Notes:
The record gives the reactivity of an RNA of 207 nucleotides to 2A3 and DMS. The RNA was probed in 150 mM KOAc, 10 mM MgCl2 and 150 mM bicine (pH 8.5) at 24 C. For 2A3, 963 sequencing reads were counted. For DMS, 2,045 sequencing reads were counted.
RNA sequence: GGGAACGACUCGAGUAGAGUCGAAAAGAGAUGAGAUGGAGAGGGUGAGGUUGAGCAUUUACCUCCCCAGUUGCCAUUCUAGGGACCAUUCUCUCCCUAUCCCUUGGACCUUACAGGGGUAACAAAGCCCACUGUUAUUAGAUCUGGGGUAAUGCACCUCAAGCAUUGAGUUCGCUCAAUGCUUGAGAAAAGAAACAACAACAACAAC
Reactivity to 2A3 in 0.01 (KOAc 150mM, MgCl2 10mM, bicine 150mM(pH8.5), 24C), signal-to-noise 2, nucleotides 027 to 156: g010a020g040a030u180g060a030g000a020u040g010g000a100g010a010g020g020g050u300g070a010g000g070u070u040g070a030g070c060a100u140u120u100a020c000c000u000c000c000c000c020a010g010u050u060g020c010c030a000u120u000c030u060a020g020g010g090a000c000c060a030u120u000c010u000c040u050c000c000c000u050a150u150c010c000c000u020u040g010g000a000c000c000u000u000a000c010a020g000g000g000g040u060a120a030c090a220a120a110g030c000c020c060a300c120u000g020u030u070a070u030u110a070g040a050u000c000u000g000g000g000g000u010a020a030u080g050c030a090c010
Reactivity to DMS in 0.01 (KOAc 150mM, MgCl2 10mM, bicine 150mM(pH8.5), 24C), signal-to-noise 1, nucleotides 027 to 156: g000a070g010a100u000g020a110g030a090u000g050g000a040g010a190g000g040g010u000g030a040g010g030u010u010g000a120g030c190a110u000u000u000a050c050c000u000c000c010c000c010a030g020u010u000g010c010c080a150u000u010c040u000a070g020g080g010a140c070c020a100u010u000c020u000c020u000c000c000c020u000a140u020c010c010c020u000u000g030g030a110c020c000u010u000a070c010a040g000g040g020g010u000a060a130c170a050a160a290g020c020c000c020a080c010u000g020u000u010a080u000u000a030g000a020u010c000u020g000g000g000g040u000a020a130u020g000c070a130c070